[RMDB]
RNA sequence: GGGAACGACUCGAGUAGAGUCGAAAAGAACUAAUGGAUUAUAGAGAUCUUGUAUACGCAGAUCGCAUAUACAAAAUGGAUGUUAGCAUUGGGCACCAUGGAGAUAUUGAAAGUAUUAAACAAUUAGAUAUCUACGCGUCUUCGGACGCGUAGAUAUAAAAGAAACAACAACAACAAC
Reactivity to DMS in 0.01 (KOAc 150mM, MgCl2 10mM, bicine 150mM(pH8.5), 24C), signal-to-noise 1, nucleotides 027 to 126: g000a060a100c060u000a050a050u010g010g020a170u000u010a100u000a070g060a300g010a050u000c060u000u010g000u000a010u000a010c040g010c040a070g020a110u020c200g060c010a070u010a000u000a000c030a010a040a060a000u020g020g010a300u020g010u000u000a010g020c010a020u020u000g000g030g030c050a280c030c030a060u030g010g010a050g000a000u000a040u000u000g000a090a140a150g010u010a050u000u000a040a060a090c060a080a060u000u020a120g000

Structure probing data (DMS) for a 177-nucleotide construct. Values cover nucleotides 27 to 126. DMS adducts were read by reverse transcription with MarathonRT. For DMS, 553 sequencing reads were counted. Conditions: 150 mM KOAc, 10 mM MgCl2 and 150 mM bicine (pH 8.5), 24 C. It was measured as part of the RMDB library OK2TST.